[RMDB]
RNA sequence: GGGAACGACUCGAGUAGAGUCGAAAAAGCCUGGUCGAUACGUCGACCAGGCAAUGCCGCCACAACGGCUUCCUGGCGUGGCGGAUCUCAUCCAAUGGAGCAACGCUCCGGAUACAUCCGGAGCGAAAAAAGCUCUGCUUCUUCGGAAGCAGAGCAAGUAUCAAUUCUAGUUCGCUAGAAUUGAUACAAAAGAAACAACAACAACAAC
Reactivity to 2A3 in 0.01 (KOAc 150mM, MgCl2 10mM, bicine 150mM(pH8.5), 24C), signal-to-noise 2, nucleotides 027 to 156: a000g300c020c000u010g000g000u010c000g010a020u010a060c200g060u030c000g010a000c010c010a010g000g000c000a000a010u000g000c020c000g020c010c010a010c010a040a040c060g040g000c000u180u160c010c020u020g010g020c000g000u000g000g000c030g000g000a010u020c050u020c010a090u070c050c080a050a150u170g010g000a010g030c020a060a040c010g000c000u000c030c000g000g000a200u300a120c070a180u070c000c010g000g010a000g000c000g010a000a000a000a000a000a010g000c000u000c000u000g000c000u000u000c000u030u000c060g110g000a000a000g000c000a000g000a000g000c000a000a000